RNA sequence: GGGAACGACUCGAGUAGAGUCGAAAAGGUCAAUGAGGUGGCCAUCACAUCUGAAGUGGCGCCCUUUGGCGGCAUCAAGCACAGCGGGCUGGGCCGGGAGCACUCCAAGUACGGCCUGGAUGAAUUCAGACAAACACUUUUUCGAAAGUGUUUGUCUAAAAGAAACAACAACAACAAC
Reactivity to 2A3 in 0.01 (KOAc 150mM, MgCl2 10mM, bicine 150mM(pH8.5), 24C), signal-to-noise 2, nucleotides 027 to 126: g060g000u030c000a000a030u040g020a100g190g030u080g130g040c020c000a030u100c010a030c020a160u140c130u190g090a170a040g070u020g040g000c000g000c000c050c000u030u040u050g000g000c010g010g050c000a040u070c050a050a050g060c010a020c010a070g050c060g050g040g030c030u040g010g000g000c000c010g020g020g010a080g050c070a040c080u010c030c020a040a050g040u040a040c050g000g000c000c010u010g010g020a050u120g060a040a140u140u170c050
Reactivity to DMS in 0.01 (KOAc 150mM, MgCl2 10mM, bicine 150mM(pH8.5), 24C), signal-to-noise 4, nucleotides 027 to 126: g010g020u000c020a020a040u010g000a200g030g020u000g010g020c020c010a040u000c130a110c160a130u000c160u010g000a080a100g040u010g000g000c000g010c020c000c050u000u000u000g010g030c030g030g000c070a050u000c090a100a070g000c060a080c070a070g020c050g000g010g010c010u000g010g010g000c030c070g000g010g010a070g020c100a070c130u010c040c050a070a050g010u000a160c040g010g000c020c000u010g010g000a070u000g010a100a110u010u000c120

Structure probing data (2A3 and DMS) for a 177-nucleotide construct.
The DMS profile rests on 4,089 reads.
Source: RMDB library OK2TRN, as collected in RNAgym.
Conditions: 150 mM KOAc, 10 mM MgCl2 and 150 mM bicine (pH 8.5), 24 C.